The record gives the reactivity of an RNA of 177 nucleotides to 2A3 and DMS. In probing experiments dimethyl sulfate is read out at A N1 and C N3, which are open when not base-paired. The reactions ran in a buffer of 150 mM KOAc, 10 mM MgCl2 and 150 mM bicine (pH 8.5), at 24 C. The DMS profile rests on 2,848 reads. The 2A3 profile rests on 5,888 reads. Values cover nucleotides 27 to 126. 2A3 adducts were read by reverse transcription with SuperScript II with manganese. The data come from the RNA Mapping Database (RMDB), library TTRDEL.

RNA sequence: GGGAACGACUCGAGUAGAGUCGAAAAGAUAUGGAAAACUUCUUUUGACGGAACCAUGAUCGGAAACGAUCAUGUUCCGAUAAGAAGUUCCUAAGUCAAAACUGCGAUUCGUUCGCGAAUCGCAGAAGAUUAUGAUCUCGUUCGCGAGAUCAUAAUCAAAAGAAACAACAACAACAAC
Reactivity to 2A3 in 0.01 (KOAc 150mM, MgCl2 10mM, bicine 150mM(pH8.5), 24C), signal-to-noise 3, nucleotides 027 to 126: g010a040u090a060u170g000g010a070a100a090a160c010u020u000c030u020u100u100u180g210a140c020g000g020a010a010c130c030a080u010g010a000u020c000g010g030a050a060a020c020g010a010u000c000a010u000g000u010u000c010c000g000a000u000a010a000g000a000a000g010u010u000c000c000u050a150a030g050u030c030a010a020a180a190c020u020g000c010g000a000u010u000c010g050u050u080c200g010c000g170a000a010u000c020g000c000a000g000a000a000
Reactivity to DMS in 0.01 (KOAc 150mM, MgCl2 10mM, bicine 150mM(pH8.5), 24C), signal-to-noise 3, nucleotides 027 to 126: g000a060u000a290u000g020g000a060a080a070a050c020u000u000c000u000u000u000u010g000a230c110g000g010a010a000c200c130a000u000g000a010u000c010g000g000a140a090a220c010g000a010u010c000a000u000g010u000u000c000c000g010a050u000a020a010g000a020a000g030u000u000c020c000u010a090a150g010u000c050a050a100a110a190c000u000g010c000g000a010u000u000c000g030u000u000c220g010c010g000a000a000u000c000g000c000a000g000a020a080